Structure probing data (2A3 and DMS) for a 177-nucleotide construct. High DMS reactivity at an A or C suggests that its Watson-Crick edge is free. Conditions: 150 mM KOAc, 10 mM MgCl2 and 150 mM bicine (pH 8.5), 24 C. The data come from the RNA Mapping Database (RMDB), library TTRDEL.

[RMDB]
RNA sequence: GGGAACGACUCGAGUAGAGUCGAAAAGAUAUGGAAUAAGAUCCGCUACGACUAUUCGGAAACGAACGAAUCGUAGAACUACGGAAUUUAUUCCUAAGUCAAAUCACGAGAGUUCGCUCUCGUGAAAGUUGUCUGUCUAGUUCGCUAGACAGACAACAAAAGAAACAACAACAACAAC
Reactivity to 2A3 in 0.01 (KOAc 150mM, MgCl2 10mM, bicine 150mM(pH8.5), 24C), signal-to-noise 2, nucleotides 027 to 126: g030a000u080a050u160g020g000a000a020u000a020a010g060a090u020c010c000g110c040u010a010c000g040a030c040u100a050u030u030c000g050g000a080a130a080c040g020a030a010c040g120a090a300u020c000g000u010a010g010a050a040c130u210a030c060g000g010a020a010u020u030u010a010u000u020c000c000u010a070a000g000u030c070a000a020a250u050c000a010c000g000a000g000a000g020u140u100c300g070c140u030c000u000c000g040u020g000a010a000a010
Reactivity to DMS in 0.01 (KOAc 150mM, MgCl2 10mM, bicine 150mM(pH8.5), 24C), signal-to-noise 2, nucleotides 027 to 126: g010a030u000a300u010g000g000a040a020u000a030a010g000a010u000c000c000g000c000u000a020c020g030a010c030u000a300u000u010c020g010g000a160a080a160c000g000a010a010c100g000a030a100u010c000g000u000a030g020a130a030c200u000a300c000g010g000a020a050u000u000u000a000u010u000c010c000u020a040a140g010u000c040a030a090a170u000c010a000c010g000a030g010a000g010u000u020c250g030c000u000c000u010c010g020u010g000a010a040a070